[RMDB]
RNA sequence: GGGAACGACUCGAGUAGAGUCGAAAACUGAUCGCCGUCGCCCUAUACGUGCGGUUCAACAUCGACGAGACCCCGGUGUUCGCCCGGGAAAGGGCAGACGAAAAAACCCGUUUGGGCCCAGCCGAAAACUAGUCGUAAAUUUCGAUUUACGACUAGUAAAAGAAACAACAACAACAAC
Reactivity to 2A3 in 0.01 (KOAc 150mM, MgCl2 10mM, bicine 150mM(pH8.5), 24C), signal-to-noise 4, nucleotides 027 to 126: c020u050g040a060u080c040g030c090c000g010u010c020g010c010c010c010u080a090u020a110c040g020u080g210c010g020g020u100u080c050a030a040c020a080u050c010g040a050c020g020a030g090a170c040c020c010c010g000g010u080g040u060u120c090g040c020c010c010g010g020g000a100a050a010g010g000g000c060a080g010a000c000g060a070a020a040a040a050a040c030c020c010g010u070u110u060g050g020g010c050c030c010a020g080c060c030g070a050a080a000
Reactivity to DMS in 0.01 (KOAc 150mM, MgCl2 10mM, bicine 150mM(pH8.5), 24C), signal-to-noise 5, nucleotides 027 to 126: c100u000g000a100u000c050g010c070c010g010u000c070g000c000c010c010u000a140u010a110c040g010u000g020c020g020g000u000u020c260a080a070c110a040u000c020g010a070c060g030a190g000a140c150c030c030c000g010g010u000g010u000u000c140g000c100c010c010g020g010g020a030a070a050g010g000g040c010a060g010a030c020g010a000a040a080a080a090a080c060c060c030g010u000u010u000g010g010g020c020c030c030a130g020c080c050g000a060a060a090